[RMDB]
RNA sequence: GGGAACGACUCGAGUAGAGUCGAAAAGGGGCUGAUGUCGCUUGGCUUGCCAGCCUCGGGUGGAAAGCUGUUGGAUUGGAACCAUCGGACGUUGCUGUCGAGCGAUCUCGUGAACUUUCCUCCAAUGUCUCCUAAAUACGUUCGCGUAUUUAGGAGAAAAAGAAACAACAACAACAAC
Reactivity to 2A3 in 0.01 (KOAc 150mM, MgCl2 10mM, bicine 150mM(pH8.5), 24C), signal-to-noise 5, nucleotides 027 to 126: g030g010g010g020c030u020g010a010u060g010u030c000g000c040u080u060g040g000c020u080u130g060c070c020a010g000c010c000u000c010g040g000g000u030g010g030a180a080a050g040c060u070g120u270u200g140g090a210u090u130g080g020a110a160c020c010a060u020c030g080g010a010c020g040u050u050g000c040u050g000u030c010g010a010g010c000g010a020u010c030u010c030g090u060g050a030a030c010u040u010u000c000c020u030c020c000a080a090u150g040
Reactivity to DMS in 0.01 (KOAc 150mM, MgCl2 10mM, bicine 150mM(pH8.5), 24C), signal-to-noise 6, nucleotides 027 to 126: g010g010g010g020c060u000g010a030u010g010u000c050g020c070u000u000g020g010c010u010u000g000c160c030a030g010c000c030u000c020g010g020g020u000g000g000a070a070a100g020c050u000g010u000u010g010g010a160u000u000g000g010a130a140c060c040a040u000c020g000g020a030c170g010u000u010g000c050u000g010u000c030g010a040g010c010g000a030u000c220u010c030g010u000g010a070a100c040u000u000u000c010c020u000c090c090a090a120u010g000
Chemical mapping of a 177-nucleotide RNA with 2A3 and DMS. Conditions: 150 mM KOAc, 10 mM MgCl2 and 150 mM bicine (pH 8.5), 24 C. Values cover nucleotides 27 to 126. DMS adducts were read by reverse transcription with MarathonRT. 2A3 adducts were read by reverse transcription with SuperScript II with manganese. For 2A3, 6,221 sequencing reads were counted.